Chemical mapping of a 177-nucleotide RNA with DMS and 2A3. The data come from the RNA Mapping Database (RMDB), library OK1LIB. Reactivities are given for positions 27 through 126. For 2A3 the reverse transcriptase was SuperScript II with manganese.
RNA sequence: GGGAACGACUCGAGUAGAGUCGAAAACUAAUAAUUAAAGUGAAGUAAAUGAUUGGUAAUGCAAUACCUAAUACUAAAACAGUAUUACUAACUAAGUUAAAUGAUAAUGAGUUAGUUAAUGCACCAACAAUAGAAAGGACUUCGGUCCUUUCUAUUGAAAAGAAACAACAACAACAAC
Reactivity to DMS in 0.01 (KOAc 150mM, MgCl2 10mM, bicine 150mM(pH8.5), 24C), signal-to-noise 3, nucleotides 027 to 126: c030u000a110a040u100a070a160u060u000a050a070a130g000u010g000a130a060g020u020a050a070a070u030g010a090u000u000g000g010u000a010a050u030g010c090a080a050u000a090c090c080u000a050a030u020a020c020u020a040a070a100a070c210a010g000u020a010u000u010a020c010u010a010a000c000u000a040a100g010u010u000a020a070a150u050g020a140u010a020a000u000g010a060g000u000u020a000g000u010u020a010a090u000g010c050a100c050c040a010a090
Reactivity to 2A3 in 0.01 (KOAc 150mM, MgCl2 10mM, bicine 150mM(pH8.5), 24C), signal-to-noise 5, nucleotides 027 to 126: c000u010a020a130u200a140a080u300u180a180a070a070g090u090g170a110a000g090u160a060a150a150u170g060a060u040u090g030g000u030a070a040u150g070c030a030a040u010a090c030c000u010a020a030u020a070c030u070a040a050a140a050c060a010g010u000a000u020u000a010c000u030a040a000c000u040a110a040g110u080u080a080a250a190u280g110a090u050a130a080u120g020a030g000u000u000a000g010u020u060a050a020u060g000c000a000c020c030a020a040